[RMDB]
RNA sequence: GGGAACGACUCGAGUAGAGUCGAAAAUUGAGCAAGUUAGAUAGAUGGUGGCUAAUCUCAUGAAAAUGGGGUGAUGCCUAUGGUUUUGGUUUCUACUCCAAGAAAGGAAUAGCAUGACUGAUUAUGAAUCAGUCGGAGUCUUCGGACUCCGACUGAUAAAAGAAACAACAACAACAAC
Reactivity to 2A3 in 0.01 (KOAc 150mM, MgCl2 10mM, bicine 150mM(pH8.5), 24C), signal-to-noise 1, nucleotides 027 to 126: u220u090g000a130g020c080a180a000g050u160u130a140g000a060u020a000g010a000u010g160g060u050g000g000c000u000a000a000u000c010u000c000a000u110g150a000a110a000a000u020g000g000g000g020u000g000a050u190g000c000c000u000a000u000g000g000u000u000u000u080g050g050u000u000u000c000u050a120c020u050c000c040a050a070g180a300a170a000g000g000a070a070u000a000g030c020a100u060g120a030c000u000g010a020u070u020a030u060g100a210
Source: RMDB library RFM100, as collected in RNAgym. This 177-nucleotide RNA was probed chemically with 2A3. The 2A3 profile rests on 359 reads.